[RMDB]
RNA sequence: GGGAACGACUCGAGUAGAGUCGAAAAGAUAUGGACCAGUAGGGAGCGUCACUUCGGAAACGAAGUGAACGCGAAGAACUACCUGGUCCUAAGUCAAACCGCAUCUCGUGUUCGCACGAGAUGCGGACCUGUGUUACAACUUCGGUUGUAACACAGGAAAAGAAACAACAACAACAAC
Reactivity to 2A3 in 0.01 (KOAc 150mM, MgCl2 10mM, bicine 150mM(pH8.5), 24C), signal-to-noise 1, nucleotides 027 to 126: g000a000u020a010u070g000g000a000c000c000a000g000u000a000g000g030g030a030g030c000g000u000c010a010c000u000u030c010g020g010a030a010a000c000g000a020a000g000u000g000a030a000c030g020c000g000a130a030g040a000a000c010u000a000c010c190u010g020g010u000c000c000u010a010a000g000u010c000a040a040a040c010c000g000c000a010u020c000u000c010g000u040g100u160u090c300g080c120a000c000g000a010g000a010u010g000c000g030g010a000
Reactivity to DMS in 0.01 (KOAc 150mM, MgCl2 10mM, bicine 150mM(pH8.5), 24C), signal-to-noise 1, nucleotides 027 to 126: g010a000u000a010u010g000g020a010c000c010a010g000u000a020g010g000g000a020g060c000g030u000c000a010c020u000u000c000g050g000a010a010a020c000g000a010a010g000u000g000a020a010c000g020c000g020a110a120g020a170a210c010u000a000c300c170u000g010g010u000c000c000u010a000a100g000u000c000a120a110a150c010c020g000c000a010u000c000u000c000g000u000g010u000u020c260g000c010a000c000g000a000g010a000u010g020c000g000g030a000